[RMDB]
RNA sequence: GGGAACGACUCGAGUAGAGUCGAAAAAAACAGUGUACGGCUCAGUAUAACACCUAUAUCUACCCACUUUUUAAAUAUAACCAUGGUAAACUAUGGCUAAUAUAGUGGAUGAGUGGGUGACCUAUCAUAUCCUAGCCUGAUUCGUCAGGCUAGGAUAAAAAGAAACAACAACAACAAC
Reactivity to DMS in 0.01 (KOAc 150mM, MgCl2 10mM, bicine 150mM(pH8.5), 24C), signal-to-noise 2, nucleotides 027 to 126: a030a060a030c080a050g000u030g000u040a020c080g000g050c040u000c080a090g040u000a080u000a110a160c050a030c000c000u000a010u010a090u020c000u000a110c080c010c000a000c000u010u010u010u020u010a000a070a060u020a010u000a110a230c000c000a000u000g010g020u030a080a130a100c050u000a000u000g000g010c050u020a090a090u000a000u000a000g030u000g030g000a000u020g000a010g000u000g000g010g030u000g000a040c080c080u020a040u010c260a090
Reactivity to 2A3 in 0.01 (KOAc 150mM, MgCl2 10mM, bicine 150mM(pH8.5), 24C), signal-to-noise 3, nucleotides 027 to 126: a000a000a000c100a110g020u050g030u050a050c020g050g000c080u050c070a020g030u050a020u020a040a020c010a020c010c000u010a020u040a130u080c000u030a080c000c020c000a000c000u040u040u000u010u220a110a250a030u120a020u000a050a010c010c000a010u010g010g050u070a140a010a020c040u040a010u000g000g010c030u060a080a050u070a050u020a060g020u020g100g000a030u020g020a010g010u000g000g000g000u000g000a020c020c000u040a100u200c030a010
Chemical mapping of a 177-nucleotide RNA with DMS and 2A3. Values cover nucleotides 27 to 126. For DMS the reverse transcriptase was MarathonRT.